[RMDB]
An RNA of 177 nucleotides, treated with DMS and read out base by base. Values are in units of 0.01, from 0 to 300, in steps of 10. It was measured as part of the RMDB library M2PK50. The RNA was probed in 150 mM KOAc, 10 mM MgCl2 and 150 mM bicine (pH 8.5) at 24 C.
RNA sequence: GGGAACGACUCGAGUAGAGUCGAAAAUCUCUCUUGUUCGCAAGAGAGAAAAGAACGCCAAAGUGACGCAAACUUCCGCGUCAGGAAGGCGAAACGAGCUAAAAAGGGGGAUCUUCGGAUCCCCCAAGGAACAAUUAGGGUUCGCCCUAAUUGUUCCAAAAGAAACAACAACAACAAC
Reactivity to DMS in 0.01 (KOAc 150mM, MgCl2 10mM, bicine 150mM(pH8.5), 24C), signal-to-noise 2, nucleotides 027 to 126: u000c010u000c000u010c000u000u000g020u020u030c200g050c000a000a000g000a000g010a010g000a000a040a090a190g010a120a210c030g060c000c010a020a140a300g010u000g020a010c000g060c000a040a040a180c190u000u010c210c100g040c000g000u000c010a000g000g010a290a190g030g000c050g030a040a080a070c090g000a090g000c070u000a050a030a080a070a090g000g000g020g000g020a000u000c000u000u000c130g010g000a020u000c000c000c000c000c000a000a000